[RMDB]
RNA sequence: GGGAACGACUCGAGUAGAGUCGAAAACAAGACGUUCGCCAUGUGCCGCAUCGACGGCCUGAUCGAGCUGCGGGAGGAACACCCAGGCGAGGGCUACUUCGCCCUUGCCGUGGGCGACUUGGCCAGCGUGCGGGCGGCGGUCUUUGCAACCGCUGAGCGCGGUAUGAUCUUUCGAGAUCAUACCGCGAAAAGAAACAACAACAACAAC
Reactivity to 2A3 in 0.01 (KOAc 150mM, MgCl2 10mM, bicine 150mM(pH8.5), 24C), signal-to-noise 1, nucleotides 027 to 156: c050a020a020g120a010c040g040u060u060c030g000c030c010a080u030g110u150g120c020c000g040c020a110u060c060g100a080c000g040g000c000c080u220g080a170u080c040g000a020g110c130u060g000c070g050g040g000a090g090g040a140a050c020a070c000c000c040a020g000g020c000g000a000g020g010g040c000u170a030c040u260u290c270g000c000c010c000u000u000g010c000c010g040u080g000g000g000c020g050a060c000u070u020g000g000c010c030a020g030c020g010u080g030c040g020g010g010c000g000g000c000g020g000u010c000u110u060u180g020c020a010a010c000c000g000c040u040g020a060g100
The record gives the reactivity of an RNA of 207 nucleotides to 2A3.
For 2A3, 754 sequencing reads were counted.
As a SHAPE reagent, 2A3 marks flexible, mostly unpaired nucleotides at the ribose 2'-OH.
It was measured as part of the RMDB library OK3TST.